[RMDB]
RNA sequence: GGGAACGACUCGAGUAGAGUCGAAAAUUAUUGUGUAGGCCACCUGGAGGCUACCAACCCCACGGCUGACAAAGAAGUUUGCGAGACCCCUCUUAAAUGCCAGAAUAGACCCGCCGAUCUAUCGGAAUACUAUGGUUUGGUUCGCCAAACCAUAGUAAAAAGAAACAACAACAACAAC
Reactivity to DMS in 0.01 (KOAc 150mM, MgCl2 10mM, bicine 150mM(pH8.5), 24C), signal-to-noise 2, nucleotides 027 to 126: u000u030a090u010u010g010u000g010u000a060g010g010c020c010a050c070c050u000g000g000a090g000g030c020u000a040c040c070a030a100c060c020c010c030a130c210g000g010c050u010g020a150c140a050a080a140g000a130a100g010u000u010u000g010c060g000a060g010a160c030c040c040c070u000c020u000u000a020a040a110u010g010c010c020a090g000a080a100u000a080g010a100c030c030c060g000c080c050g020a080u000c040u020a130u010c030g010g010a140a180

An RNA of 177 nucleotides, treated with DMS and read out base by base. Values cover nucleotides 27 to 126. The RNA was probed in 150 mM KOAc, 10 mM MgCl2 and 150 mM bicine (pH 8.5) at 24 C.